[RMDB]
RNA sequence: GGGAACGACUCGAGUAGAGUCGAAAAGAUAUGGACGGGAACUCAGCGAAGAACUAUACCGAGUUGACUACAUCGGAAACGAUGUAGUCAAUAGUGUAUAGGGAGCUGGUAGUACCGUCCUAAGUCAUCUCUAUAAGAGCUUCGGCUCUUAUAGAGAAAAAGAAACAACAACAACAAC
Reactivity to DMS in 0.01 (KOAc 150mM, MgCl2 10mM, bicine 150mM(pH8.5), 24C), signal-to-noise 1, nucleotides 027 to 126: g000a030u000a160u000g000g010a000c030g000g000g000a200a260c220u040c000a000g000c030g000a070a290g010a130a240c000u000a010u000a010c000c040g010a300g030u010u010g000a020c000u010a010c010a000u000c020g000g000a030a020a100c000g030a010u010g010u000a010g000u000c000a000a000u020a120g030u010g000u010a000u000a020g000g000g000a010g000c000u000g000g000u000a050g000u010a210c000c000g010u010c000c000u000a000a070g000u000c000a130